[RMDB]
Chemical mapping of a 177-nucleotide RNA with DMS and 2A3. For DMS the reverse transcriptase was MarathonRT.
RNA sequence: GGGAACGACUCGAGUAGAGUCGAAAACAUGUGAAGUGCAUGGUAAUGGUAGUAUGAUAGAGGAUAUUGAUUAUGUACCCCUAAAAUCUGCAGUCUGUAUUACAGCUUGUAAUUUAGGGGGCGCUGUGCUAUUCUGUAGGUUCGCCUACAGAAUAGCAAAAGAAACAACAACAACAAC
Reactivity to DMS in 0.01 (KOAc 150mM, MgCl2 10mM, bicine 150mM(pH8.5), 24C), signal-to-noise 1, nucleotides 027 to 126: c030a030u000g010u010g000a160a050g010u010g010c030a020u000g020g010u000a080a120u000g000g040u000a010g010u020a050u010g000a110u000a030g000a080g010g030a090u020a110u000u000g000a070u000u000a050u030g000u000a130c000c000c000c000u020a000a000a020a060u000c180u000g000c010a030g000u020c010u000g010u020a120u010u000a090c010a000g020c040u020u000g010u000a030a030u000u000u000a050g010g000g000g000g020c100g000c000u050g000u020
Reactivity to 2A3 in 0.01 (KOAc 150mM, MgCl2 10mM, bicine 150mM(pH8.5), 24C), signal-to-noise 2, nucleotides 027 to 126: c020a010u040g020u010g090a170a030g050u040g080c000a000u040g000g020u110a070a050u080g010g030u020a020g020u020a030u090g060a030u030a090g070a000g060g010a010u000a070u110u130g070a040u060u150a070u190g080u190a210c010c000c000c000u020a010a000a000a030u000c080u020g000c000a000g030u040c000u020g020u020a190u090u300a050c000a000g020c030u050u030g000u040a050a020u010u000u000a010g020g020g000g020g000c040g000c020u140g020u020